[RMDB]
RNA sequence: GGGAACGACUCGAGUAGAGUCGAAAAGAUAUGGAUUGUAGUGCGUAUCCUUAUGUCGGAAACGACAUGAAGGAAGCACGCAAUCCUAAGUCAAAUGGUGUUUAGCGAGUUCGCUCGCUAAACACCAGAUUCUAUAUCUCUUCGGAGAUAUAGAAUCAAAAGAAACAACAACAACAAC
Reactivity to DMS in 0.01 (KOAc 150mM, MgCl2 10mM, bicine 150mM(pH8.5), 24C), signal-to-noise 3, nucleotides 027 to 126: g010a030u010a260u010g000g000a010u000u000g000u000a080g050u000g010c000g010u000a120u010c010c000u010u010a020u000g000u000c000g010g000a070a050a150c000g000a010c010a000u000g030a010a010g010g010a060a190g020c010a010c000g000c000a010a000u000c000c000u010a010a090g000u000c010a130a140a280u000g000g020u000g010u000u000u000a010g000c000g000a030g020u010u010c300g010c020u000c010g000c000u000a000a000a010c000a000c000c000a010
Reactivity to 2A3 in 0.01 (KOAc 150mM, MgCl2 10mM, bicine 150mM(pH8.5), 24C), signal-to-noise 6, nucleotides 027 to 126: g010a020u030a030u100g010g010a010u020u010g040u120a300g030u030g020c120g110u300a300u200c000c010u020u020a010u010g010u010c010g010g020a050a020a030c010g000a010c010a000u030g010a000a020g020g000a220a040g000c000a000c000g000c000a000a000u000c010c000u020a070a000g030u020c040a020a070a260u170g010g010u010g000u000u000u010a000g010c020g010a020g010u080u090c300g100c240u000c000g000c010u010a000a000a010c000a000c000c000a000
The record gives the reactivity of an RNA of 177 nucleotides to DMS and 2A3.
The RNA was probed in 150 mM KOAc, 10 mM MgCl2 and 150 mM bicine (pH 8.5) at 24 C.
The DMS profile rests on 5,849 reads.
2A3 adducts were read by reverse transcription with SuperScript II with manganese.